[RMDB]
RNA sequence: GGGAACGACUCGAGUAGAGUCGAAAACUGCAGAGUGUUAAUACAGGAACUUCUACAAGCAGGAUUUAUUGCUGUUGAAGAUCUUACACAUCUUCUUGUCCCUCUAUGACAUGACGCUGGGACUAAGAUCCUGAUCCACUGAACUUUAGCAAGACUAAUUAUCACGUGCUUUCGAGCACGUGAUAAUAAAAGAAACAACAACAACAAC
Reactivity to 2A3 in 0.01 (KOAc 150mM, MgCl2 10mM, bicine 150mM(pH8.5), 24C), signal-to-noise 3, nucleotides 027 to 156: c040u060g020c030a010g020a030g070u040g040u150u150a110a060u170a130c030a040g010g020a030a050c000u000u000c020u030a020c040a140a050g000c000a000g000g140a050u040u210u160a170u270u080g000c020u010g020u060u050g010a000a000g020a010u000c030u030u150a020c040a020c010a110u020c010u080u010c000u030u070g000u010c040c090c000u010c040u060a130u120g150a080c060a090u100g060a050c060g030c130u030g000g030g000a000c000u020a010a030g000a030u040c000c010u040g020a050u030c040c030a050c030u020g070a110a030c020u140u110u070a040g060c040a060a000g020a070c050u100a080
Reactivity to DMS in 0.01 (KOAc 150mM, MgCl2 10mM, bicine 150mM(pH8.5), 24C), signal-to-noise 2, nucleotides 027 to 156: c030u000g000c040a060g000a300g000u000g020u000u010a090a150u000a080c100a100g070g020a090a040c030u000u000c050u000a100c060a040a150g050c010a040g030g000a090u000u000u000a070u030u000g060c000u000g000u000u010g020a070a080g000a090u000c040u010u000a110c080a070c170a050u000c020u000u000c010u000u000g040u000c000c000c000u000c040u010a150u010g000a140c050a090u000g040a130c150g000c020u000g020g000g020a020c040u000a030a110g010a020u000c010c010u000g010a110u000c020c030a170c070u020g000a000a080c060u000u000u010a100g000c060a040a110g000a160c100u000a100
The record gives the reactivity of an RNA of 207 nucleotides to 2A3 and DMS. The 2A3 profile rests on 1,604 reads. Conditions: 150 mM KOAc, 10 mM MgCl2 and 150 mM bicine (pH 8.5), 24 C. Reactivities are given for positions 27 through 156.